[RMDB]
RNA sequence: GGGAACGACUCGAGUAGAGUCGAAAAAAGAUAUCACAUAUCUAAAUGAAUACCGGAAUCAUAGAUUUAUUUGAUAAUCAUGUUGAUAGUAUACCAACUAUAUUACCUCAUCAGUUAGCUACUCUAGAUUAUCUAGUUAGAACUAUCAUAGAUGAGACUUAGCAUUUCUGUUCGCAGAAAUGCUAAGAAAAGAAACAACAACAACAAC
Reactivity to 2A3 in 0.01 (KOAc 150mM, MgCl2 10mM, bicine 150mM(pH8.5), 24C), signal-to-noise 2, nucleotides 027 to 156: a020a000g050a010u030a010u000c020a010c010a030u040a010u050c030u060a110a110a040u080g020a070a070u130a140c090c090g110g080a070a060u040c030a030u040a060g060a070u040u190u150a050u010u090u180g050a030u040a180a100u030c060a050u100g020u080u090g020a030u010a040g060u040a010u050a130c060c030a010a010c040u000a020u020a030u160u160a060c010c020u010c000a000u000c010a010g010u000u000a000g000c010u010a040c030u000c010u060a010g010a090u120u190a110u300c000u000a000g040u000u030a020g010a090a100c000u000a000u040c030a130u020a090g010a000u000g010a010g010a000
Reactivity to DMS in 0.01 (KOAc 150mM, MgCl2 10mM, bicine 150mM(pH8.5), 24C), signal-to-noise 1, nucleotides 027 to 156: a110a090g000a110u010a030u000c050a080c080a300u000a120u010c040u020a000a090a040u000g010a100a120u000a140c040c010g000g030a070a050u000c080a110u000a130g040a080u020u000u010a050u020u000u000g000a100u040a060a070u000c020a200u000g000u010u010g000a000u000a010g020u000a090u000a070c040c080a050a100c040u000a080u000a030u000u000a110c110c020u000c000a020u000c030a070g010u000u000a000g030c050u010a140c030u030c030u000a000g030a260u010u000a190u000c010u000a020g000u020u000a030g000a030a030c010u000a010u000c000a110u010a140g000a020u000g000a020g030a210
Structure probing data (2A3 and DMS) for a 207-nucleotide construct.
For 2A3, 719 sequencing reads were counted.
The DMS profile rests on 1,535 reads.
The reactions ran in a buffer of 150 mM KOAc, 10 mM MgCl2 and 150 mM bicine (pH 8.5), at 24 C.
Values cover nucleotides 27 to 156.
DMS adducts were read by reverse transcription with MarathonRT.